[RMDB]
RNA sequence: GGGAACGACUCGAGUAGAGUCGAAAAGAUAUGGAAUAACCAGUACGUAUGAACUACGAAUGGAAAAGCAAGUUCGGAAACGAACUUGCUUUUCCCGCUUCGCAUACCGACCGUUAUUCCUAAGUCAUCUCUAUGAUCUCUUCGGAGAUCAUAGAGAAAAAGAAACAACAACAACAAC
Reactivity to DMS in 0.01 (KOAc 150mM, MgCl2 10mM, bicine 150mM(pH8.5), 24C), signal-to-noise 1, nucleotides 027 to 126: g010a030u010a300u000g000g000a000a050u000a000a010c010c010a150g020u000a170c300g000u000a010u000g000a070a070c190u000a300c000g000a150a000u000g020g000a010a000a010a020g000c030a020a000g050u000u000c000g030g000a130a090a280c000g010a030a000c000u000u000g000c000u000u000u000u000c000c010c030g020c040u020u000c030g030c030a010u000a000c000c010g000a100c300c300g010u000u000a000u000u000c000c000u030a030a180g030u000c040a070

An RNA of 177 nucleotides, treated with DMS and read out base by base. The RNA was probed in 150 mM KOAc, 10 mM MgCl2 and 150 mM bicine (pH 8.5) at 24 C. Reactivities are given for positions 27 through 126.